[RMDB]
RNA sequence: GGGAACGACUCGAGUAGAGUCGAAAAAGGUUGUAAAGAUAUUACAUAUUUAUCAAAACAAUUAGUGACUUAUAAGAAGUCUGAAGAAGACAGAAGCAAAUACGCAAACAAAUGCAGAGUGCAGUAGCACCUCAGGGCAGAGAUAAUUCUGCCUGUACGACUGACUAAAUUUCGAUUUAGUCAGUCGAAAAGAAACAACAACAACAAC
Reactivity to 2A3 in 0.01 (KOAc 150mM, MgCl2 10mM, bicine 150mM(pH8.5), 24C), signal-to-noise 1, nucleotides 027 to 156: a000g170g000u090u000g010u070a250a280a040g000a070u110a080u050u260a170c020a000u240a170u170u240u180a120u000c100a000a290a080a210c110a110a020u160u140a040g030u030g020a040c000u110u170a020u090a280a270g150a170a000g000u060c020u020g000a000a060g060a000a000g020a060c020a040g040a010a000g040c000a070a070a070u050a060c000g000c060a030a140a050c000a000a300a000u020g000c000a000g140a020g080u020g000c040a040g110u040a000g000c000a000c000c000u000c070a000g010g000g010c000a000g000a000g000a000u030a080a140u300u000c000u000g000c000c070u000g000u020a000